[RMDB]
RNA sequence: GGGAACGACUCGAGUAGAGUCGAAAACAGAGCUGAUGGGCCAUGUACCUAUCCAAAAUGAGAUCCCAUCUUGCACACUGUGGUAAUUUGAGAUUCUCAUGCCUCCUACUUGGAGAGAUCUGGACUACUAACUGUAUGACGUUCGCGUCAUACAGAACUUCACAGAGGCGUUCGCGCCUCUGUGAAGAAAAGAAACAACAACAACAAC
Reactivity to 2A3 in 0.01 (KOAc 150mM, MgCl2 10mM, bicine 150mM(pH8.5), 24C), signal-to-noise 2, nucleotides 027 to 156: c040a000g000a020g060c040u040g020a050u010g000g000g010c000c040a110u210g000u090a100c020c010u020a020u070c030c010a030a120a120a080u040g000a040g000a010u010c000c000c000a000u000c020u040u060g000c000a000c010a030c130u140g200u300g160g000u030a040a060u030u050u040g050a070g010a060u300u110c010u030c020a000u100g010c000c000u000c000c000u090a170c120u150u220g000g000a030g000a010g000a060u070c010u010g010g030a020c030u060a070c000u030a300a000c000u000g000u000a000u000g000a000c000g000u000u070c160g040c000g080u010c000a000u000a000c000a000g000a000a000